[RMDB]
The record gives the reactivity of an RNA of 177 nucleotides to DMS. Reactivities are given for positions 27 through 126. Conditions: 150 mM KOAc, 10 mM MgCl2 and 150 mM bicine (pH 8.5), 24 C.

RNA sequence: GGGAACGACUCGAGUAGAGUCGAAAAUCCUAGCCUGAGAUCAGAGGCAUAGAGUUGAUGUGGAGGACAGUCAGGAAGAACCCUCUGGGGAAAGAAAGCAGAUUGUUAAAAGGCUCUACGCUGGGAAGGUUUUAUGGUCAUUCGUGACCAUAAAACCAAAAGAAACAACAACAACAAC
Reactivity to DMS in 0.01 (KOAc 150mM, MgCl2 10mM, bicine 150mM(pH8.5), 24C), signal-to-noise 1, nucleotides 027 to 126: u010c020c020u000a070g020c060c030u000g000a120g030a120u000c090a020g020a150g000g000c100a030u010a060g010a080g010u000u000g010a100u010g040u010g050g000a110g010g010a090c080a060g000u010c050a050g000g020a090a110g010a130a120c040c020c020u000c170u020g010g040g000g000a040a060a070g000a080a160a050g000c100a030g030a160u000u000g000u000u000a040a120a110a200g000g000c000u000c000u000a020c060g000c020u040g000g020g010a080a110